[RMDB]
RNA sequence: GGGAACGACUCGAGUAGAGUCGAAAACCAUGUCAGUCACUCUGGUAUUGGUUCUAUUCCUAUGAUGGGAGUAUUACAGGUAUUCAACCUUGACCAGAGAUCACUCGAUGUGUAACCAUAAUUGUAAAACUAGUAGGGAAUUCGUUCCCUACUAGUUAAAAGAAACAACAACAACAAC
Reactivity to DMS in 0.01 (KOAc 150mM, MgCl2 10mM, bicine 150mM(pH8.5), 24C), signal-to-noise 7, nucleotides 027 to 126: c300c010a020u010g010u000c010a020g000u010c240a110c020u010c000u000g000g010u000a110u010u000g010g010u000u000c080u000a030u000u000c000c000u000a060u000g010a030u000g010g020g010a170g010u010a020u000u000a040c060a010g010g020u000a020u000u000c130a030a020c010c010u000u000g000a030c010c010a010g000a030g010a100u010c150a030c000u000c130g010a010u000g020u000g000u000a080a270c020c020a100u010a070a150u010u010g010u010a070a090
Reactivity to 2A3 in 0.01 (KOAc 150mM, MgCl2 10mM, bicine 150mM(pH8.5), 24C), signal-to-noise 5, nucleotides 027 to 126: c040c000a020u000g010u000c000a010g010u020c010a000c040u010c010u010g020g000u040a080u050u100g060g010u020u000c000u020a030u030u050c000c000u040a100u170g140a060u090g030g180g080a110g100u190a070u050u070a040c050a040g000g050u060a110u040u140c030a040a040c010c000u010u100g090a020c000c010a000g010a010g030a220u030c010a000c020u050c090g010a010u000g010u000g000u050a050a020c010c010a040u100a140a200u240u120g150u180a050a110
An RNA of 177 nucleotides, treated with DMS and 2A3 and read out base by base.
Values are in units of 0.01, from 0 to 300, in steps of 10.
The reactions ran in a buffer of 150 mM KOAc, 10 mM MgCl2 and 150 mM bicine (pH 8.5), at 24 C.